[RMDB]
RNA sequence: GGGAACGACUCGAGUAGAGUCGAAAAGAUAUGGAAUGGCCCUGGGAGUCCGAAGGUCGGAAACGAUGUUGACGGACGACGAUCAGGGACCAUUCCUAAGUCAAAUCCCUUGCUUCGGCAAGGGAAACCUAUAAACCAUCUUCGGAUGGUUUAUAGGAAAAGAAACAACAACAACAAC
Reactivity to 2A3 in 0.01 (KOAc 150mM, MgCl2 10mM, bicine 150mM(pH8.5), 24C), signal-to-noise 3, nucleotides 027 to 126: g010a020u090a040u150g000g000a000a000u010g000g010c010c000c010u010g020g010g020a040g010u000c010c010g050a020a010g130g020u010c020g000g010a070a050a020c020g020a020u040g130u300u150g210a120c020g010g000a010c020g030a080c020g010a050u040c020a020g000g000g020a010c000c000a000u000u000c000c000u000a020a010g020u010c010a010a060a200u010c000c020c000u010u000g010c010u040u080c300g130g000c010a010a000g000g000g000a040a020a000
Reactivity to DMS in 0.01 (KOAc 150mM, MgCl2 10mM, bicine 150mM(pH8.5), 24C), signal-to-noise 4, nucleotides 027 to 126: g010a050u000a300u000g010g010a010a000u000g000g000c000c010c000u000g000g000g000a110g010u000c010c010g010a300a110g010g000u000c000g000g000a080a090a160c010g020a010u010g010u010u010g000a280c050g010g000a050c050g010a080c190g020a040u000c010a010g000g000g010a050c010c000a000u000u000c000c000u000a000a080g000u000c020a080a140a160u000c000c000c000u000u000g010c000u000u020c180g010g000c000a010a010g000g000g000a000a000a010